[RMDB]
RNA sequence: GGGAACGACUCGAGUAGAGUCGAAAAAAAUUAGCCGAGUGUGGUGGUGCACACCUGUAAUCCUAGCUACUUGGGAGGCUGAGACAGGAGAAUCACUUCAAUCAGGGAGGCAGAGAUUGCUUGAGCUGAGACUGUGCCACUGCACUCCAGCCUGGGACGAAAAUAUAGUCUUCGGACUAUAUUUUCGAAAAGAAACAACAACAACAAC
Reactivity to 2A3 in 0.01 (KOAc 150mM, MgCl2 10mM, bicine 150mM(pH8.5), 24C), signal-to-noise 1, nucleotides 027 to 156: a000a000a020u120u050a040g040c050c070g000a040g000u000g000u000g010g000u000g000g000u010g010c020a020c000a010c010c000u020g000u020a050a040u000c000c010u020a030g040c010u050a050c030u090u030g040g050g000a030g050g000c170u040g010a010g020a010c050a050g040g120a050g120a060a040u070c010a040c030u080u030c060a060a190u060c010a050g030g050g040a160g080g000c030a000g030a000g000a060u060u060g020c000u100u110g050a040g050c060u030g050a020g040a110c070u010g010u000g010c020c000a010c000u010g000c010a000c000u000c010c020a020g020c010c000u030g000g070g030a020
Reactivity to DMS in 0.01 (KOAc 150mM, MgCl2 10mM, bicine 150mM(pH8.5), 24C), signal-to-noise 1, nucleotides 027 to 156: a090a020a090u020u000a060g040c000c000g040a040g020u010g060u000g000g000u010g000g010u000g000c070a060c040a080c010c020u000g000u000a030a010u000c000c030u000a090g020c000u000a070c090u000u010g010g020g010a130g000g010c040u000g020a030g000a110c030a040g000g010a130g000a130a110u000c020a060c050u000u000c030a100a110u000c070a080g000g010g000a090g040g010c120a110g010a050g000a080u000u000g000c040u000u000g000a110g050c050u000g010a090g000a060c120u000g030u010g020c000c020a100c030u010g070c010a050c010u000c020c010a020g060c000c000u000g020g000g030a240

Chemical mapping of a 207-nucleotide RNA with 2A3 and DMS. For 2A3 the reverse transcriptase was SuperScript II with manganese.